[RMDB]
RNA sequence: GGGAACGACUCGAGUAGAGUCGAAAAGAUAUGGAUGUGUGACGUCGUUUGGGCAUCGAUCUCGGAAACGAGGGAGCCUUUGCGACGCAAUGCACAUCCUAAGUCAAAACUAGCCUUCGGGCUAGAACGAAAUGGAGAGGUUCGCCUCUCCAUUUCGAAAAGAAACAACAACAACAAC
Reactivity to DMS in 0.01 (KOAc 150mM, MgCl2 10mM, bicine 150mM(pH8.5), 24C), signal-to-noise 2, nucleotides 027 to 126: g000a040u010a300u000g000g010a000u010g020u010g000u010g000a070c010g010u010c000g010u000u000u010g000g010g010c020a290u020c180g000a060u030c000u010c000g000g000a160a070a160c030g010a010g000g000g000a030g020c000c000u000u000u000g000c010g010a000c000g030c030a030a050u000g010c000a000c010a010u000c010c000u000a030a070g020u000c010a120a060a090a220c000u000a000g000c000c000u000u020c180g030g020g010c000u000a000g010a060a100
Reactivity to 2A3 in 0.01 (KOAc 150mM, MgCl2 10mM, bicine 150mM(pH8.5), 24C), signal-to-noise 2, nucleotides 027 to 126: g040a030u070a020u120g010g000a010u000g080u000g010u070g300a060c000g020u000c010g000u010u040u020g030g010g000c070a180u300c190g060a050u030c000u010c000g020g060a120a120a090c000g000a010g020g000g020a010g000c000c000u020u000u020g020c010g010a020c010g000c000a010a020u070g000c000a000c000a010u020c000c000u010a120a010g010u000c020a020a000a100a150c000u000a000g010c010c000u020u130c280g030g020g000c000u000a000g000a050a020